[RMDB]
RNA sequence: GGGAACGACUCGAGUAGAGUCGAAAACCAUCGACUGUCACCAGAUGCUGCAUCACCUGAUCACUGAUGGCUCAACGGUAUCCGGCGGUACAACUGAAUACUUGUAGCUGCCUUUUGAGCGGGUUGAAAAAUCGGAGGUUGUUCGCAACCUCCGAAACCGUAGUAUAAACUUCGGUUUAUACUACGGAAAAGAAACAACAACAACAAC
Reactivity to 2A3 in 0.01 (KOAc 150mM, MgCl2 10mM, bicine 150mM(pH8.5), 24C), signal-to-noise 5, nucleotides 027 to 156: c010c000a030u090c050g100a060c060u070g040u110c030a020c050c020a050g020a070u050g030c040u040g010c010a040u040c020a030c020c010u060g040a050u060c020a020c060u040g010a040u050g100g000c010u020c040a060a050c040g030g010u060a040u060c040c040g010g000c010g020g010u050a040c020a040a020c070u160g060a130a100u120a170c030u040u080g030u060a060g100c030u030g000c020c000u060u090u010u100g010a020g020c030g030g000g000u040u040g090a050a060a020a020a050u020c000g000g000a000g000g000u000u010g010u020u020c070g000c080a000a000c000c000u000c000c000g000a000a000a000
Reactivity to DMS in 0.01 (KOAc 150mM, MgCl2 10mM, bicine 150mM(pH8.5), 24C), signal-to-noise 2, nucleotides 027 to 156: c030c020a130u010c050g020a110c040u000g010u000c040a080c040c020a090g020a090u000g020c040u020g010c030a160u000c060a040c000c020u010g000a070u010c040a070c100u000g010a080u010g040g010c010u000c000a070a070c010g010g010u000a020u010c020c000g030g020c020g040g010u000a080c110a090a050c030u020g010a060a040u000a040c030u010u000g020u000a020g030c020u010g000c020c020u000u000u000u000g000a050g010c000g000g010g000u010u000g020a020a110a050a120a070u010c000g010g030a040g030g000u000u010g010u000u000c260g000c020a020a030c010c000u000c000c000g010a010a030a100
Source: RMDB library M2RFPK, as collected in RNAgym.
Chemical mapping of a 207-nucleotide RNA with 2A3 and DMS.
Reactivities are given for positions 27 through 156.
The RNA was probed in 150 mM KOAc, 10 mM MgCl2 and 150 mM bicine (pH 8.5) at 24 C.
For DMS the reverse transcriptase was MarathonRT.